[RMDB]
RNA sequence: GGGAACGACUCGAGUAGAGUCGAAAAUAAUAUGCAUAUCGAGUUCCCAUGUAUUUUCGUAGCCCUGCGGCUGUAACAUUACAGCUUAGUAAGAAUGCUACCUAACGAUAGCUAGGCGCAGGAUUAAUUCACUUUACGUAUUCGUACGUAAAGUGAAAAAAGAAACAACAACAACAAC
Reactivity to 2A3 in 0.01 (KOAc 150mM, MgCl2 10mM, bicine 150mM(pH8.5), 24C), signal-to-noise 3, nucleotides 027 to 126: u060a020a050u160a070u110g030c070a060u020a020u100c040g040a030g080u000u010c040c030c010a020u070g020u040a160u030u070u020u160c080g030u060a050g080c020c000c000u010g030c000g010g000c000u000g010u020a100a160c090a260u120u150a000c000a000g000c020u010u000a000g000u000a190a130g030a090a000u050g010c000u010a010c000c000u030a070a020c030g080a130u050a120g000c000u010a000g020g000c020g000c010a000g000g030a010u050u150a050a050
Reactivity to DMS in 0.01 (KOAc 150mM, MgCl2 10mM, bicine 150mM(pH8.5), 24C), signal-to-noise 5, nucleotides 027 to 126: u010a100a100u010a080u000g010c070a100u010a060u000c050g010a210g010u000u000c000c000c000a150u010g010u010a050u010u010u000u010c080g000u010a130g010c140c000c010u000g010c010g000g010c000u000g010u000a020a140c270a160u010u000a010c000a000g000c020u000u000a020g010u000a050a100g010a060a080u010g000c020u000a020c000c000u010a010a060c040g010a130u000a050g000c010u000a010g000g000c150g010c010a010g010g000a150u010u000a040a120